Source: RMDB library OK1LIB, as collected in RNAgym. An RNA of 177 nucleotides, treated with DMS and 2A3 and read out base by base. The RNA was probed in 150 mM KOAc, 10 mM MgCl2 and 150 mM bicine (pH 8.5) at 24 C. For DMS the reverse transcriptase was MarathonRT. For 2A3 the reverse transcriptase was SuperScript II with manganese.
[RMDB]
RNA sequence: GGGAACGACUCGAGUAGAGUCGAAAACAAGAGAAAAUACUAUCUUGCAUCAAAACGGGUGAUGAACAUAAUGGUAAUUUAUUUAUGGUUGGAGAUGUUAAGCAAUCCAUUUAUAAAUUUAGACAAGCACUUAGGCUACCUUCGGGUAGCCUAAGUGAAAAGAAACAACAACAACAAC
Reactivity to DMS in 0.01 (KOAc 150mM, MgCl2 10mM, bicine 150mM(pH8.5), 24C), signal-to-noise 1, nucleotides 027 to 126: c040a020a120g000a090g020a050a130a150a070u030a110c130u030a100u000c000u050u000g000c030a040u000c030a010a200a060a080c200g020g030g000u000g000a000u000g010a090a120c140a100u000a070a110u000g020g020u000a000a000u000u000u000a000u000u000u000a000u000g000g120u000u010g060g070a200g000a070u000g030u080u000a070a180g060c020a060a010u000c000c000a020u000u000u000a000u010a000a000a020u050u000u000a070g000a000c060a010a080g030
Reactivity to 2A3 in 0.01 (KOAc 150mM, MgCl2 10mM, bicine 150mM(pH8.5), 24C), signal-to-noise 2, nucleotides 027 to 126: c000a000a000g030a010g080a050a120a000a160u180a100c070u080a020u060c000u010u050g000c000a030u000c030a020a060a010a110c060g100g000g110u030g010a040u070g040a040a020c060a110u200a200a010u170g020g000u010a040a020u000u000u020a040u000u040u000a010u020g030g020u050u060g030g000a100g060a230u070g120u200u100a100a000g040c020a010a030u120c000c000a000u000u040u070a040u040a000a030a000u020u120u050a010g030a030c010a000a020g000